[RMDB]
RNA sequence: GGGAACGACUCGAGUAGAGUCGAAAACUUGGUCAAAUAUUCAAGAGAGUUGAAAAUAAUGAAUACCGUGGUGGACCAGCGUAUUAUAUUGAAUAUGGUAUUGGUGGUAAAUUUGGUAAAAUUUACGCAUGAUCCUCAAUUUCGAUUGAGGAUCAUGAAAAGAAACAACAACAACAAC
Reactivity to 2A3 in 0.01 (KOAc 150mM, MgCl2 10mM, bicine 150mM(pH8.5), 24C), signal-to-noise 2, nucleotides 027 to 126: c020u020u050g000g000u030c030a010a100a250u090a110u090u040c030a000a040g080a010g040a140g180u090u100g080a090a090a030a020u170a020a070u070g050a000a040u060a070c040c000g040u060g040g070u050g060g010a010c000c020a030g020c020g050u030a030u050u030a060u050a040u110u090g030a130a040u050a030u090g020g000u040a000u060u120g050g010u050g000g000u040a000a030a110u000u030u010g020g010u020a000a010a090a000u030u050u050a020c020g000
Reactivity to DMS in 0.01 (KOAc 150mM, MgCl2 10mM, bicine 150mM(pH8.5), 24C), signal-to-noise 4, nucleotides 027 to 126: c040u000u010g020g010u000c060a110a120a120u010a050u000u000c020a030a060g020a160g000a100g010u010u000g000a070a070a120a110u010a070a100u010g010a060a080u010a040c090c040g020u000g010g020u000g020g000a060c030c010a060g020c070g010u000a030u010u000a040u000a080u010u000g010a040a300u010a030u010g000g010u000a030u000u000g010g000u010g010g020u000a010a030a030u000u000u000g000g010u010a040a020a030a050u000u000u010a030c090g020